[RMDB]
RNA sequence: GGGAACGACUCGAGUAGAGUCGAAAAAUGGGGCCGACCCGCAGGCGGCCGAACACGAAUGCGCCUCCUGGCUCGAUGAAAGAAUCAGCGGCCGCACUCGGCGAGCGCUGCUCAGCGACCGUCAGCACAUCCGUCUUUCUUUCGAGAAAGACGGAUGAAAAGAAACAACAACAACAAC
Reactivity to DMS in 0.01 (KOAc 150mM, MgCl2 10mM, bicine 150mM(pH8.5), 24C), signal-to-noise 2, nucleotides 027 to 126: a100u030g020g000g020g000c060c040g010a100c060c040c000g000c140a200g000g010c010g010g000c000c010g000a150a030c080a060c200g000a080a050u030g020c080g010c120c020u010c140c030u000g010g020c000u000c030g000a130u040g000a130a090a060g020a060a030u000c060a060g010c300g040g000c010c020g040c030a190c060u020c000g000g010c050g020a090g000c030g000c040u010g000c090u030c080a060g030c010g000a010c010c040g020u030c050a110g020c090a160
Reactivity to 2A3 in 0.01 (KOAc 150mM, MgCl2 10mM, bicine 150mM(pH8.5), 24C), signal-to-noise 3, nucleotides 027 to 126: a020u070g000g000g040g020c020c020g020a060c010c020c000g000c040a030g040g040c000g000g000c030c010g030a090a040c140a010c070g090a130a080u170g010c030g000c020c000u030c020c020u020g010g000c030u020c030g070a110u170g100a090a120a080g030a030a100u060c010a010g020c000g010g030c030c010g020c000a030c010u060c010g030g000c030g040a070g020c120g000c050u100g020c040u040c110a020g010c010g070a090c000c010g040u030c010a010g010c030a020